[RMDB]
RNA sequence: GGGAACGACUCGAGUAGAGUCGAAAACACAGAGAGACAGACCCCACACAGGUCCGAGCGCCGAUGAGCGGAAAGCUGAUCCGAUGGCUGGCCACGAACGAUACAGCACUCAAAAAGGGACAGCCGUUGUAUACGAAGUUUUCGAACUUCGUAUACAAAAAGAAACAACAACAACAAC
Reactivity to 2A3 in 0.01 (KOAc 150mM, MgCl2 10mM, bicine 150mM(pH8.5), 24C), signal-to-noise 3, nucleotides 027 to 126: c050a000c020a010g100a000g020a000g040a110c000a020g040a010c020c010c020c000a040c010a000c010a030g000g040u010c020c030g100a060g040c030g000c040c020g110a140u120g050a020g030c010g010g040a100a030a010g020c020u020g020a050u040c020c040g060a050u120g020g010c010u000g020g010c010c010a070c040g060a140a020c030g020a010u100a110c070a070g030c030a030c060u080c010a030a080a020a070a040g060g000g010a020c010a000g030c020c010g030u020
Reactivity to DMS in 0.01 (KOAc 150mM, MgCl2 10mM, bicine 150mM(pH8.5), 24C), signal-to-noise 5, nucleotides 027 to 126: c080a130c090a090g010a130g010a140g010a080c070a080g010a110c040c020c010c030a070c120a090c130a100g000g010u000c030c050g000a120g020c080g010c050c060g010a090u000g010a120g010c020g000g000a040a060a140g010c040u000g000a080u000c020c040g000a110u000g000g020c010u000g010g000c000c010a090c090g000a070a130c140g000a070u000a050c100a090g010c090a090c140u010c040a040a030a040a140a150g000g000g000a040c030a010g000c010c020g010u000